The record gives the reactivity of an RNA of 170 nucleotides to 2A3 and DMS. DMS adducts were read by reverse transcription with MarathonRT. For 2A3 the reverse transcriptase was SuperScript II with manganese. The RNA was probed in 150 mM KOAc, 10 mM MgCl2 and 150 mM bicine (pH 8.5) at 24 C. It was measured as part of the RMDB library 15KLIB.
RNA sequence: GGGAACGACUCGAGUAGAGUCGAAAAGGAAAUCCCAAGAAGGUCAUUCGAGAUUCAAGAGGUGAGGAGGGAUCCCCGAGACGCUGGAGGAGCACCGGGAAAAAGAAAAGAAGGCAAGGAAUUGGUAAAGGUACCUUCUUCGGAAGGUACAAAAGAAACAACAACAACAAC
Reactivity to 2A3 in 0.01 (KOAc 150mM, MgCl2 10mM, bicine 150mM(pH8.5), 24C), signal-to-noise 3, nucleotides 027 to 129: g110g010a060a060a060u050c000c010c010a010a020g070a010a000g000g020u040c030a120u090u060c070g020a020g000a080u070u050c060a050a020g020a000g030g040u110g020a010g000g020a020g000g000g000a000u020c000c010c000c000g050a040g000a030c030g010c050u050g020g000a040g010g010a010g010c020a030c020c000g000g010g000a040a050a000a000a000g050a000a060a000a000g060a000a010g000g000c030a020a000g030g000a020a040u090u090g020g010u130a110a050a000g030
Reactivity to DMS in 0.01 (KOAc 150mM, MgCl2 10mM, bicine 150mM(pH8.5), 24C), signal-to-noise 5, nucleotides 027 to 129: g000g000a080a060a120u010c020c030c010a160a120g040a040a050g000g060u040c020a110u030u020c140g030a050g000a080u000u000c000a110a070g050a120g000g000u020g020a060g010g040a040g030g010g010a100u030c030c020c040c080g020a120g040a070c160g050c090u000g060g020a020g000g000a050g000c070a050c000c080g030g010g050a000a020a070a070a070g000a000a050a080a070g000a000a040g040g020c110a070a040g010g020a020a060u100u010g020g020u050a030a110a070g000